This 177-nucleotide RNA was probed chemically with 2A3 and DMS.
For 2A3, 3,099 sequencing reads were counted.
The DMS profile rests on 1,758 reads.
For 2A3 the reverse transcriptase was SuperScript II with manganese.
Reactivities are given for positions 27 through 126.
RNA sequence: GGGAACGACUCGAGUAGAGUCGAAAAAAAAAGAUAUGGAGUGACAAGUCGAGCUUAACGAAGAACGCUAAUCGGAAACGAUUAGCGGGAGUUAAGAACUACUCGUCACCCACUCCUAAGUCAAAAAGUUGUAAUACCUGUUCGCAGGUAUUACAACAAAAGAAACAACAACAACAAC
Reactivity to 2A3 in 0.01 (KOAc 150mM, MgCl2 10mM, bicine 150mM(pH8.5), 24C), signal-to-noise 1, nucleotides 027 to 126: a070a000a010a000a000g000a020u040a000u000g000g000a010g010u010g010a020c030a300a300g010u050c000g010a000g050c030u000u000a020a000c000g240a300a030g000a030a010c000g020c000u010a000a010u000c000g050g000a010a000a020c000g000a000u000u000a000g000c000g000g000g000a030g000u010u020a000a000g000a000a000c020u250a070c000u040c020g060u040c040a070c000c000c000a000c010u000c010c000u000a000a010g020u010c070a040a000a010a150a130
Reactivity to DMS in 0.01 (KOAc 150mM, MgCl2 10mM, bicine 150mM(pH8.5), 24C), signal-to-noise 2, nucleotides 027 to 126: a030a050a070a070a060g000a010u000a000u000g000g000a020g010u000g000a020c120a110a120g010u000c010g010a010g000c000u000u000a000a000c000g030a110a180g000a050a200c010g000c000u000a010a000u000c000g010g000a010a010a020c010g020a010u000u000a000g000c000g000g000g000a020g020u000u010a000a010g000a040a020c030u010a300c010u000c000g000u020c020a100c270c100c010a000c020u000c000c000u000a040a120g010u000c020a040a060a100a060a050